Background:
Structure probing data (2A3 and DMS) for a 207-nucleotide construct. The data come from the RNA Mapping Database (RMDB), library M2RFPK. The RNA was probed in 150 mM KOAc, 10 mM MgCl2 and 150 mM bicine (pH 8.5) at 24 C. For DMS, 12,207 sequencing reads were counted.
RNA sequence: GGGAACGACUCGAGUAGAGUCGAAAAGAAACGCAAGGCCGCUGACCGACGGGAUAUUGUGGCGCUUACCACAGGGGACGCGGCGUUAUCACUUGCCUUUUAAGCCGACCGUCUGGGCUGCAUACAAACCACCCAACUAUCUUCGGAUAGUUGGGAACCAUAAGGUAAAGUUCGCUUUACCUUAUGGAAAAGAAACAACAACAACAAC
Reactivity to 2A3 in 0.01 (KOAc 150mM, MgCl2 10mM, bicine 150mM(pH8.5), 24C), signal-to-noise 8, nucleotides 027 to 156: g010a010a050a010c110g000c030a000a030g130g000c000c000g020c030u060g060a050c000c050g030a030c050g050g030g050a110u110a110u190u090g020u010g010g020c080g050c170u110u160a050c000c000a010c010a020g000g000g010g030a000c030g000c020g010g030c000g010u050u030a030u060c010a010c090u020u020g000c010c010u040u130u020u090a060a020g010c000c010g050a090c020c010g020u020c030u070g030g010g020c010u030g010c020a070u120a110c060a010a090a030c040c040a050c020c010c000a000a000c000u000a000u000c010u030u030c070g090g000a000u000a000g000u000u000g000g000g000a000a010
Reactivity to DMS in 0.01 (KOAc 150mM, MgCl2 10mM, bicine 150mM(pH8.5), 24C), signal-to-noise 5, nucleotides 027 to 156: g010a080a070a050c080g030c030a070a100g010g030c000c010g000c030u000g010a250c060c020g020a210c030g020g000g010a130u010a080u000u000g040u010g010g030c030g010c200u000u000a050c010c030a020c020a120g010g000g010g010a230c170g010c040g000g010c010g020u000u000a070u000c100a220c050u000u010g010c030c020u020u010u010u000a050a120g020c020c020g010a090c040c010g000u000c050u000g010g020g010c030u000g060c040a110u000a140c060a060a060a100c040c050a120c000c000c000a010a010c000u000a000u000c010u000u000c300g030g000a010u000a020g010u000u000g010g010g000a000a020